[RMDB]
Chemical mapping of a 177-nucleotide RNA with 2A3.
2A3 adducts were read by reverse transcription with SuperScript II with manganese.
Reactivities are given for positions 27 through 126.

RNA sequence: GGGAACGACUCGAGUAGAGUCGAAAAGGAAAGGGCGCCAGCUGGGGUGAGCGGCAUUCUAGCGACAGGCCGGAAGUGGUUAUUUCUUCAAUGCGACAACUAAUUAUAAAAGCACCGAAGAGGGCUUACUCACCCAAAACUUCGGUUUUGGGUGAGUAAAAGAAACAACAACAACAAC
Reactivity to 2A3 in 0.01 (KOAc 150mM, MgCl2 10mM, bicine 150mM(pH8.5), 24C), signal-to-noise 2, nucleotides 027 to 126: g040g000a000a050a000g050g020g000c000g090c070c050a020g030c030u060g000g010g030g020u150g010a030g080c050g000g000c030a000u000u050c050u050a000g010c000g050a030c030a090g020g000c000c000g000g050a040a040g030u010g120g040u070u160a080u060u140u000c010u060u010c000a030a050u100g060c030g050a010c010a060a000c030u120a100a090u250u090a070u100a190a090a000a000g010c060a080c110c020g000a060a010g040a000g050g010g000c010u010u000

Background: The 2A3 profile rests on 574 reads.